[RMDB]
RNA sequence: GGGAACGACUCGAGUAGAGUCGAAAACUCAAGCGGCGCGGUGUGCUUCGCCAGAGUCAGCUUGCCGCCGCGCAGGCGGAAAGCGCUGCGCGUGUAGUGCGCCGACUGGCGGCCGUUGCGGGGCUUGUUAUCACCCCGUAUUCGUACGGGGUGAUAAAAAAGAAACAACAACAACAAC
Reactivity to 2A3 in 0.01 (KOAc 150mM, MgCl2 10mM, bicine 150mM(pH8.5), 24C), signal-to-noise 5, nucleotides 027 to 126: c000u010c000a000a010g010c060g260g000c010g010c000g010g010u050g060u140g040c020u150u150c020g000c000c000a030g000a020g120u050c040a020g010c020u090u120g030c000c010g010c000c020g000c030g020c020a010g030g020c000g050g060a100a080a020g070c110g030c030u030g010c020g010c030g000u160g040u110a160g060u120g060c010g000c000c020g040a030c000u000g000g010c000g020g000c000c000g020u040u050g010c000g030g090g110g010c010u010u010g010
Reactivity to DMS in 0.01 (KOAc 150mM, MgCl2 10mM, bicine 150mM(pH8.5), 24C), signal-to-noise 2, nucleotides 027 to 126: c020u000c000a030a010g030c000g000g050c020g000c000g000g070u010g000u030g010c040u030u030c030g060c000c010a020g000a170g010u020c060a080g000c000u020u010g020c020c000g000c000c000g000c250g000c090a050g010g000c010g000g000a060a060a090g000c000g000c110u000g000c100g000c030g000u080g010u000a110g020u040g010c060g010c010c070g020a100c020u000g020g000c000g010g000c010c020g010u010u000g020c030g000g000g000g000c010u000u020g010